[RMDB]
RNA sequence: GGGAACGACUCGAGUAGAGUCGAAAAGAUGCCUGCCUCGCAAUGAGGCAGGUCGCAGUGACUCGGAGGCUCCGACUGUCUAAUAACAACAUAGGUGACCGCAAAUCCGCAAGGACGCGUACGGUCAGUACUGCAGUAAGUUCGCUUACUGCAGUACAAAAGAAACAACAACAACAAC
Reactivity to 2A3 in 0.01 (KOAc 150mM, MgCl2 10mM, bicine 150mM(pH8.5), 24C), signal-to-noise 4, nucleotides 027 to 126: g060a040u190g020c000c000u000g000c000c010u010c010g020c160a140a300u300g000a000g000g000c000a010g010g000u010c000g000c010a070g040u050g110a030c010u000c040g060g030a050g100g100c090u040c050c000g040a030c070u070g010u010c010u000a070a090u060a160a060c080a010a010c000a050u150a070g200g070u030g040a020c000c000g000c010a040a030a010u030c010c010g040c070a040a050g030g000a020c030g020c010g080u110a110c020g000g000u020c010a000
Reactivity to DMS in 0.01 (KOAc 150mM, MgCl2 10mM, bicine 150mM(pH8.5), 24C), signal-to-noise 4, nucleotides 027 to 126: g010a130u010g000c010c010u000g010c000c000u010c010g030c250a150a110u010g000a030g010g000c000a000g000g030u000c060g010c070a070g020u000g000a070c020u010c050g000g010a130g020g000c060u000c010c020g000a060c120u000g010u000c060u010a090a060u010a070a110c100a040a070c160a120u000a080g010g020u000g010a010c000c010g010c030a040a260a110u000c000c010g000c270a100a110g020g000a000c040g000c300g030u000a070c060g000g000u000c040a090